[RMDB]
RNA sequence: GGGAACGACUCGAGUAGAGUCGAAAAAAUAGUAGAAGGACGUUAAGCAUUUAUCAUUGAACUAUAAUUGUUCAUUGAAGUCAUUGAUGCAAACUCCUUGGUCACACACACAUACGGCGCGGAAGGCGGUGUAAAAAAAGUUCGCUUUUUUUACACCAAAAGAAACAACAACAACAAC
Reactivity to DMS in 0.01 (KOAc 150mM, MgCl2 10mM, bicine 150mM(pH8.5), 24C), signal-to-noise 5, nucleotides 027 to 126: a070a050u010a070g020u010a110g010a060a020g010g000a030c190g020u000u000a090a140g010c010a010u000u000u000a070u000c010a010u000u010g000a000a010c000u000a110u010a110a130u020u010g000u000u000c000a010u000u000g010a030a090g000u020c290a130u000u000g010a010u000g020c010a140a040a040c030u000c010c000u000u010g000g010u000c030a050c050a040c050a040c080a050c060a050u000a090c060g000g010c020g020c040g010g010a080a140g010g010c120
Reactivity to 2A3 in 0.01 (KOAc 150mM, MgCl2 10mM, bicine 150mM(pH8.5), 24C), signal-to-noise 5, nucleotides 027 to 126: a000a000u180a040g070u020a010g040a150a010g020g000a010c080g010u030u030a120a080g000c010a010u030u070u090a090u060c000a000u000u020g000a000a000c020u030a030u150a300a260u210u080g010u020u000c000a000u000u020g010a050a020g050u090c050a070u040u250g020a010u020g000c000a000a040a030c010u000c000c020u000u020g030g010u050c000a010c000a000c000a000c010a000c000a050u070a190c040g000g020c000g000c010g060g030a040a010g040g000c040